[RMDB]
RNA sequence: GGGAACGACUCGAGUAGAGUCGAAAAAUUCAGCACUUCCCCUUCCAGGAUGGAAGGGGUCUGAUGUGAUCAGCUUGUCACCCAGUAGCUGAGUGGCCUUUAGAGGUGGUACUUUAGAGGCUUAGUGUACCAGAAAGUGGUUCGCCACUUUCUGGUAAAAAGAAACAACAACAACAAC
Reactivity to 2A3 in 0.01 (KOAc 150mM, MgCl2 10mM, bicine 150mM(pH8.5), 24C), signal-to-noise 1, nucleotides 027 to 126: a000u010u050c030a030g010c020a010c120u070u010c100c010c010c030u040u000c010c000a160g280g210a300u260g000g020a070a000g000g020g010g000u000c000u000g040a090u130g030u010g050a150u020c010a010g070c040u050u130g070u060c010a070c020c020c010a050g060u030a010g000c000u000g000a000g030u070g020g030c040c000u030u050u020a000g000a010g000g020u120g000g040u030a040c000u010u060u000a010g000a010g040g030c000u020u000a060g000u070g050
Reactivity to DMS in 0.01 (KOAc 150mM, MgCl2 10mM, bicine 150mM(pH8.5), 24C), signal-to-noise 3, nucleotides 027 to 126: a060u010u000c020a100g020c300a110c120u000u010c010c010c000c000u010u000c010c000a200g000g000a190u020g020g000a010a000g000g000g000g010u000c010u010g000a080u000g010u000g010a140u000c070a070g020c090u010u010g000u010c060a110c000c070c000a160g000u000a070g010c010u010g000a040g020u000g020g000c010c000u000u000u000a010g000a020g000g000u000g000g010u000a190c000u000u000u000a010g000a010g000g000c000u000u000a050g030u000g020

Conditions: 150 mM KOAc, 10 mM MgCl2 and 150 mM bicine (pH 8.5), 24 C. Structure probing data (2A3 and DMS) for a 177-nucleotide construct. Values are in units of 0.01, from 0 to 300, in steps of 10. The DMS profile rests on 2,925 reads.